[RMDB]
Source information:
Chemical mapping of a 177-nucleotide RNA with 2A3 and DMS. It was measured as part of the RMDB library RFM100. Reactivities are given for positions 27 through 126. The 2A3 profile rests on 968 reads. For 2A3 the reverse transcriptase was SuperScript II with manganese.

RNA sequence: GGGAACGACUCGAGUAGAGUCGAAAAAACUUAUUGAUGAAAACUUUAAAUGCGUCAAGUACAUCAAAAGAGGAAACAGAGGGAAAGAACCAGGUUGGCAAACAAGCAAAAAGGCAAGGACGAACCUUAGAAGAGAAAUCUUCGGAUUUCUCUUCUAAAAAGAAACAACAACAACAAC
Reactivity to 2A3 in 0.01 (KOAc 150mM, MgCl2 10mM, bicine 150mM(pH8.5), 24C), signal-to-noise 2, nucleotides 027 to 126: a000a010c050u070u080a100u060u050g010a020u020g070a050a050a040a040c020u040u110u160a070a130a110u200g060c040g040u040c020a020a010g020u050a120c000a030u000c000a000a000a000a060g060a010g000g020a070a070a000c080a020g030a030g020g060g000a010a090a010g020a000a020c000c000a010g010g030u040u050g060g000c000a050a130a060c020a080a040g110c000a000a080a120a050a000g060g040c010a000a040g040g000a010c010g000a020a020c010c010u000
Reactivity to DMS in 0.01 (KOAc 150mM, MgCl2 10mM, bicine 150mM(pH8.5), 24C), signal-to-noise 2, nucleotides 027 to 126: a060a070c040u000u000a080u020u000g000a030u010g020a070a080a060a030c080u030u020u010a050a050a040u030g000c120g000u000c080a040a040g000u000a090c020a000u010c020a050a010a040a050g000a020g000g000a080a030a020c050a100g000a120g000g020g010a070a040a050g000a030a090c140c050a010g000g000u030u020g000g000c110a070a070a080c160a030a060g000c070a010a030a030a030a040g030g000c050a040a080g010g000a080c020g000a090a050c070c040u000